[RMDB]
RNA sequence: GGGAACGACUCGAGUAGAGUCGAAAAUCCAGCAGAUUGGUCCCGCCCGCGAUAAAUUUUGCGCCGGGUACGCGCUGAGCGCUAAGUGCCGCCUCGGCUGGGGUAUUCACUCGUUCAUAGGUAAACGUCAGAUAAAUAGCUUCGGCUAUUUAUCUGAAAAAGAAACAACAACAACAAC
Reactivity to DMS in 0.01 (KOAc 150mM, MgCl2 10mM, bicine 150mM(pH8.5), 24C), signal-to-noise 3, nucleotides 027 to 126: u000c010c000a080g020c070a070g000a110u000u000g010g020u000c020c020c000g020c110c060c020g020c010g010a040u010a040a130a180u000u000u010u000g010c010g020c220c000g000g010g020u010a040c120g010c050g010c080u000g000a110g010c060g040c070u000a070a090g010u000g010c110c110g000c090c050u000c050g010g010c040u010g020g000g000g000u000a120u010u010c060a060c060u000c020g020u000u000c040a100u010a120g010g010u010a040a060a080c140g000
Reactivity to 2A3 in 0.01 (KOAc 150mM, MgCl2 10mM, bicine 150mM(pH8.5), 24C), signal-to-noise 2, nucleotides 027 to 126: u000c000c000a000g020c020a010g020a180u150u160g030g000u000c000c010c000g000c000c000c020g060c020g010a010u110a140a300a260u270u280u180u130g030c000g030c080c030g000g020g040u050a040c070g020c020g000c090u100g110a010g040c070g000c020u080a070a020g050u030g110c040c010g030c000c000u070c060g050g000c010u030g000g000g040g000u060a040u050u050c040a010c030u050c020g020u080u030c030a060u110a160g070g140u160a140a100a040c040g060
An RNA of 177 nucleotides, treated with DMS and 2A3 and read out base by base. Values are in units of 0.01, from 0 to 300, in steps of 10. For 2A3 the reverse transcriptase was SuperScript II with manganese. Reactivities are given for positions 27 through 126. The DMS profile rests on 2,420 reads.